[RMDB]
The data come from the RNA Mapping Database (RMDB), library RFM100. An RNA of 177 nucleotides, treated with DMS and 2A3 and read out base by base.
RNA sequence: GGGAACGACUCGAGUAGAGUCGAAAACUGUGUUUAAGUACUGGUGGUUCCGUCCACUGGUGCACUCGCUUGGCACCUAAGCAGUGUUCCGUCAUUGCUUAGUGUGGAAACAACGUUCUGUCGUUGUCGAAUACGCUAUGUUCGCAUAGCGUAUUCGAAAAGAAACAACAACAACAAC
Reactivity to DMS in 0.01 (KOAc 150mM, MgCl2 10mM, bicine 150mM(pH8.5), 24C), signal-to-noise 1, nucleotides 027 to 126: c060u020g050u030g030u010u000u000a030a070g060u000a020c000u000g020g030u000g000g010u000u060c160c070g000u090c000c000a000c000u010g000g010u000g030c000a010c160u000c000g060c020u010u010g010g000c040a050c000c000u000a020a020g030c010a020g000u020g000u000u070c160c090g000u050c000a020u000u000g020c010u020u000a020g000u040g000u020g000g000a130a140a030c010a010a010c010g030u020u020c160u000g000u040c000g000u010u000g000u020
Reactivity to 2A3 in 0.01 (KOAc 150mM, MgCl2 10mM, bicine 150mM(pH8.5), 24C), signal-to-noise 5, nucleotides 027 to 126: c020u060g040u000g060u080u070u080a140a020g010u010a000c000u020g010g000u010g010g020u210u300c080c080g100u100c060c000a010c000u000g020g000u010g010c000a010c020u030c010g090c080u110u080g110g030c000a010c000c000u000a000a000g000c000a020g030u000g020u180u280c050c070g140u240c010a000u000u000g000c000u010u010a000g010u030g000u010g240g020a050a070a040c030a010a010c010g010u080u050c070u140g150u100c030g020u030u010g000u020
For 2A3, 2,574 sequencing reads were counted. For 2A3 the reverse transcriptase was SuperScript II with manganese. The reactions ran in a buffer of 150 mM KOAc, 10 mM MgCl2 and 150 mM bicine (pH 8.5), at 24 C.